[RMDB]
RNA sequence: GGGAACGACUCGAGUAGAGUCGAAAAGAGCAACUUAGGAUUUUAGGCUCCCCGGUGCUUCUCGAACCGCGCCGGGCCAAACCCACAGGGGCUGGCGGUCCUGUGCGGUCAAAAUCUUUCCGCUGGAAUACCUAUCCCAGUUUCGACUGGGAUAGAAGAAUGUUUACUUCUUCGGAAGUAAACAUUCAAAAGAAACAACAACAACAAC
Reactivity to 2A3 in 0.01 (KOAc 150mM, MgCl2 10mM, bicine 150mM(pH8.5), 24C), signal-to-noise 1, nucleotides 027 to 156: g020a010g000c030a050a120c100u080u050a100g060g090a070u060u010u030u090a050g010g030c010u000c010c000c010c000g000g020u010g000c020u130u150c160u110c180g180a200a100c090c050g000c010g030c000c000g010g010g000c000c000a030a010a010c000c000c000a020c010a010g020g000g000g020c010u010g010g020c000g000g040u020c000c000u020g020u000g000c220g000g000u050c030a020a020a010a060u030c000u120u120u040c010c000g000c010u040g020g060a120a110u160a150c020c010u000a000u000c000c000c010a000g010u010u050u120c160g080a040c000u000g000g000g000a000u000a000g000a000a000